Chemical mapping of a 207-nucleotide RNA with 2A3 and DMS. The RNA was probed in 150 mM KOAc, 10 mM MgCl2 and 150 mM bicine (pH 8.5) at 24 C. For DMS the reverse transcriptase was MarathonRT. 2A3 is a SHAPE reagent: it acylates the 2'-hydroxyl of flexible nucleotides of all four kinds. For DMS, 2,969 sequencing reads were counted. 2A3 adducts were read by reverse transcription with SuperScript II with manganese.

RNA sequence: GGGAACGACUCGAGUAGAGUCGAAAAUCUGCAGGUACUCGGAGUGGAAUUUCUUCGCCAUUUAGUUAUACUAAAAUUGAAUUGUGACUAUUUAUUCUAAAUGGAGAAUUCGGUAGAUAUCAACGAUUUCCUAUCCGAUCAUGAGUAUAGCAGCUACAACGAAAUGGAGUUUCGACUCCAUUUCGUUAAAAGAAACAACAACAACAAC
Reactivity to 2A3 in 0.01 (KOAc 150mM, MgCl2 10mM, bicine 150mM(pH8.5), 24C), signal-to-noise 3, nucleotides 027 to 156: u050c010u010g000c000a050g130g130u020a000c020u010c030g000g010a000g010u100g000g070a070a070u040u090u100c030u050u040c030g010c010c010a020u020u000u000a000g000u060u080a100u010a170c100u110a090a090a110a160u070u150g050a070a060u110u170g080u080g060a020c020u040a050u070u130u030a070u070u040c000u010a000a010a000u000g010g000a020g010a010a020u140u090c030g030g040u100a030g030a160u070a060u250c050a080a050c070g000a020u000u010u020c010c010u010a070u020c000c010g020a030u080c020a110u160g040a010g010u050a020u010a050g000c000a000g010c010u070a050c090
Reactivity to DMS in 0.01 (KOAc 150mM, MgCl2 10mM, bicine 150mM(pH8.5), 24C), signal-to-noise 2, nucleotides 027 to 156: u020c020u010g010c010a100g020g040u000a030c060u000c040g020g000a150g010u060g020g000a080a070u000u000u000c100u000u020c000g020c000c010a040u010u000u000a050g010u000u000a060u010a170c070u010a090a080a100a110u010u020g010a130a180u000u010g000u000g020a170c090u000a090u000u000u000a050u040u000c010u000a000a030a020u000g000g030a040g010a020a100u000u000c050g000g000u000a090g000a200u000a090u010c020a040a100c010g010a080u000u000u000c060c000u010a300u000c010c000g030a070u000c080a070u000g010a100g030u010a040u010a120g000c030a020g020c100u010a090c130